[RMDB]
RNA sequence: GGGAACGACUCGAGUAGAGUCGAAAACACCAGCCCGAGGUUACGACACGAAUGGGCUGGUACAAAUUACGUAUAGCUCUUGCAGCAGCGUGUCGAAGCGUACCCGAGCUAUACGCCUGGGGUGGUGGAUAUUGUUUAGUUUCGACUGGACAAUAUCAAAAGAAACAACAACAACAAC
Reactivity to DMS in 0.01 (KOAc 150mM, MgCl2 10mM, bicine 150mM(pH8.5), 24C), signal-to-noise 9, nucleotides 027 to 126: c150a060c000c000a010g000c010c000c000g020a120g020g010u020u010a080c060g000a020c030a020c020g010a120a100u040g000g000g010c010u000g000g000u000a010c070a030a090a110u030u010a150c050g000u000a020u010a010g000c000u000c010u030u020g020c120a090g020c100a110g000c020g010u000g010u000c040g010a180a100g010c070g010u030a110c090c060c070g000a040g000c010u000a020u000a010c040g010c050c010u010g000g000g000g010u010g000g010u010g010
Reactivity to 2A3 in 0.01 (KOAc 150mM, MgCl2 10mM, bicine 150mM(pH8.5), 24C), signal-to-noise 9, nucleotides 027 to 126: c050a000c000c000a000g030c000c000c000g120a120g140g010u090u140a070c070g030a010c050a010c060g090a110a120u210g000g000g000c000u000g000g000u000a000c010a000a040a010u200u100a030c020g010u010a010u010a020g000c000u000c020u040u190g070c090a070g010c030a030g040c050g020u030g040u060c050g060a120a020g030c020g040u090a090c020c020c010g000a000g000c000u010a010u010a030c010g010c000c010u060g000g000g000g020u080g010g060u070g060